Record summary: Structure probing data (2A3 and DMS) for a 177-nucleotide construct. For DMS the reverse transcriptase was MarathonRT. The reactions ran in a buffer of 150 mM KOAc, 10 mM MgCl2 and 150 mM bicine (pH 8.5), at 24 C.
RNA sequence: GGGAACGACUCGAGUAGAGUCGAAAAUAGGUAAAUGAACAGCAGUAGCAACCAAUGCAGCAGCAUCCUUGACGGACAUUGUCUUUAAAGCACCUUGAAGCUGUUGGUCUAAAUCAUCUUCGCUAACAGACUACCCUAAUUUCGAUUAGGGUAGUCUAAAAGAAACAACAACAACAAC
Reactivity to 2A3 in 0.01 (KOAc 150mM, MgCl2 10mM, bicine 150mM(pH8.5), 24C), signal-to-noise 2, nucleotides 027 to 126: u160a020g040g020u050a050a090a110u140g050a070a010c010a010g000c000a020g030u060a020g030c010a010a040c050c050a060a060u090g050c030a050g010c020a000g030c010a030u050c000c010u020u050g090a030c030g000g020a010c030a130u070u130g020u000c020u010u090u040a080a050a000g040c030a050c020c030u050u060g040a030a000g000c020u020g020u080u040g020g010u000c020u060a100a100a010u070c030a070u020c030u130u070c000g080c120u030a040a020c140
Reactivity to DMS in 0.01 (KOAc 150mM, MgCl2 10mM, bicine 150mM(pH8.5), 24C), signal-to-noise 4, nucleotides 027 to 126: u000a050g010g000u000a050a110a090u000g010a070a050c060a040g020c020a060g030u000a060g010c050a050a090c110c060a070a080u010g000c030a050g000c070a050g010c040a040u000c060c030u010u000g020a100c220g000g010a070c080a100u000u010g000u000c020u000u010u000a050a040a070g010c100a070c130c080u000u000g000a060a080g010c040u000g000u000u000g010g000u010c040u000a040a080a100u010c080a070u010c070u000u000c070g000c090u000a070a080c220